[RMDB]
RNA sequence: GGGAACGACUCGAGUAGAGUCGAAAACAAACAAAGCAAAAUUGUCCAUUGUGGUCUACCGUCAGAAUUUCGGGCGGAUCUACGAGAUUAUACAGAAAGCCGGCCGCAAUGUCGUAUAGAAAGGAAACACGUAAAUGCUAUUCGUAGCAUUUACGUGAAAAGAAACAACAACAACAAC
Reactivity to 2A3 in 0.01 (KOAc 150mM, MgCl2 10mM, bicine 150mM(pH8.5), 24C), signal-to-noise 6, nucleotides 027 to 126: c040a010a110a000c060a060a100a020g200c090a080a090a140a190u170u200g020u020c010c000a000u000u010g000u010g050g010u000c010u020a030c020c000g010u000c000a020g110a230a210u160u200u140c030g030g010g000c020g010g000a060u000c010u060a050c140g000a000g010a160u010u130a070u110a110c040a020g170a020a070a000g090c050c030g000g020c020c000g000c010a010a000u010g020u020c020g050u090a060u060a100g160a050a060a020g120g070a040a080a000
Reactivity to DMS in 0.01 (KOAc 150mM, MgCl2 10mM, bicine 150mM(pH8.5), 24C), signal-to-noise 4, nucleotides 027 to 126: c040a120a100a070c160a060a080a130g020c190a070a050a100a050u030u020g000u020c100c000a010u000u000g000u000g030g000u000c000u020a090c020c070g010u010c040a060g020a080a170u000u020u020c030g010g010g040c010g020g000a070u000c050u000a070c140g000a150g000a070u000u030a080u060a140c180a100g000a100a050a100g020c150c130g000g010c000c000g010c010a010a020u000g000u020c050g000u020a040u010a030g000a060a020a070g010g020a080a100a090
The record gives the reactivity of an RNA of 177 nucleotides to 2A3 and DMS. The reactions ran in a buffer of 150 mM KOAc, 10 mM MgCl2 and 150 mM bicine (pH 8.5), at 24 C. For DMS, 7,041 sequencing reads were counted. It was measured as part of the RMDB library OK1LIB.